[RMDB]
RNA sequence: GGGAACGACUCGAGUAGAGUCGAAAAUACCUGCCCUUCAAUUGGAGGUGCCAGGGCUAGGCUUUGUUCCUAUGGCUAGCGAAAGCGAAUACAGGUUAUUAGGCGUCGUGAAAACAAAACUCUUUCGACAUAAGGGAGAGGCUCGUAGAUGAGUUACCUAACACUAAAUGUUCGCAUUUAGUGUUAGAAAAGAAACAACAACAACAAC
Reactivity to DMS in 0.01 (KOAc 150mM, MgCl2 10mM, bicine 150mM(pH8.5), 24C), signal-to-noise 4, nucleotides 027 to 156: u000a060c010c010u000g020c020c010c000u000u000c030a220a200u000u010g020g020a060g010g020u000g030c070c050a060g000g020g020c050u020a050g020g020c030u000u010u000g020u000u000c010c010u000a120u000g020g010c030u000a140g020c030g020a090a090a110g030c030g010a130a080u000a100c050a100g000g030u000u000a090u000u010a080g020g030c040g010u000c040g040u000g000a060a060a060a120c060a070a040a050a090c040u010c030u010u000u010c010g020a080c130a120u010a090a130g010g000g000a060g010a070g000g020c030u000c040g030u010a110g010a150u010g010a060g010u000u000a090c130
Reactivity to 2A3 in 0.01 (KOAc 150mM, MgCl2 10mM, bicine 150mM(pH8.5), 24C), signal-to-noise 6, nucleotides 027 to 156: u140a030c000c000u000g010c000c000c000u040u030c110a300a300u190u300g020g000a010g010g010u030g010c100c010a010g010g000g030c050u060a030g030g030c020u080u070u140g040u070u050c000c000u020a060u080g020g010c030u020a020g000c020g050a080a030a010g040c040g020a050a010u100a110c050a040g000g070u070u050a060u060u070a080g040g010c030g010u030c030g000u080g090a030a080a050a030c090a020a110a060a030c020u020c020u050u080u030c050g090a070c070a140u200a070a130g000g010g000a020g000a010g010g010c010u020c040g060u070a040g020a180u130g010a030g030u020u020a020c000